[RMDB]
RNA sequence: GGGAACGACUCGAGUAGAGUCGAAAAAAAAGAUAUGGAUGUUAGGGAGCUCGACGAGCCGAUGAAAGCUAUCGGAAACGAUAGCUGGAGGCUCCAAGAGCGAAGAACUAACAUCCUAAGUCAAAAACUAUUAGUUACUCUUCGGAGUAACUAAUAGAAAAGAAACAACAACAACAAC
Reactivity to DMS in 0.01 (KOAc 150mM, MgCl2 10mM, bicine 150mM(pH8.5), 24C), signal-to-noise 3, nucleotides 027 to 126: a080a070a110a120g020a080u010a300u000g010g000a000u000g000u000u020a020g010g010g000a170g000c020u000c000g010a300c300g000a000g000c000c000g010a100u010g000a260a150a020g000c000u000a000u000c010g020g010a180a070a090c020g000a020u000a000g000c000u000g000g000a040g010g010c000u010c000c010a030a300g000a010g000c000g000a040a050g010a150a190c000u000a000a010c010a010u010c000c000u010a010a040g000u020c010a080a060a070a120a210

Chemical mapping of a 177-nucleotide RNA with DMS.
It was measured as part of the RMDB library TTRDES.
Values cover nucleotides 27 to 126.
Conditions: 150 mM KOAc, 10 mM MgCl2 and 150 mM bicine (pH 8.5), 24 C.
The DMS profile rests on 2,749 reads.
Values are in units of 0.01, from 0 to 300, in steps of 10.